RNA sequence: GGGAACGACUCGAGUAGAGUCGAAAAUAUCACCCCCAGCUUUGGCCAUGGCCAUGGGUGAGAUUUGGCACCCAGAGCCUCCAGGGGCCUCAGCUUAUUGUGCACUGCCCCAUGUGCAGCUGUGGAAUCAUCCAUUAGCAUUCGUGCUAAUGGAUGAAAAAGAAACAACAACAACAAC
Reactivity to 2A3 in 0.01 (KOAc 150mM, MgCl2 10mM, bicine 150mM(pH8.5), 24C), signal-to-noise 7, nucleotides 027 to 126: u180a040u070c030a120c000c000c000c010c010a010g010c030u070u040u090g030g000c000c030a060u070g000g000c020c020a080u020g010g020g010u030g030a080g040a130u170u170u180g100g000c010a000c010c000c000a010g010a010g020c010c000u030c050c060a120g080g000g040g000c000c000u020c000a010g000c000u060u110a160u150u210g100u060g010c020a010c030u080g030c000c000c000c040a050u100g030u040g020c010a020g010c060u040g010u080g050g050a030a070
Reactivity to DMS in 0.01 (KOAc 150mM, MgCl2 10mM, bicine 150mM(pH8.5), 24C), signal-to-noise 8, nucleotides 027 to 126: u020a070u020c120a250c020c010c000c070c060a030g000c020u000u010u010g010g010c030c020a110u020g010g010c020c100a110u000g000g010g020u000g000a080g010a140u020u030u010g020g000c000a020c000c000c000a010g000a300g000c010c000u000c180c110a170g020g020g010g000c000c000u000c050a010g000c010u000u020a060u020u010g010u000g000c010a030c020u010g010c070c000c030c050a150u020g000u010g010c010a030g010c090u000g010u010g010g000a190a150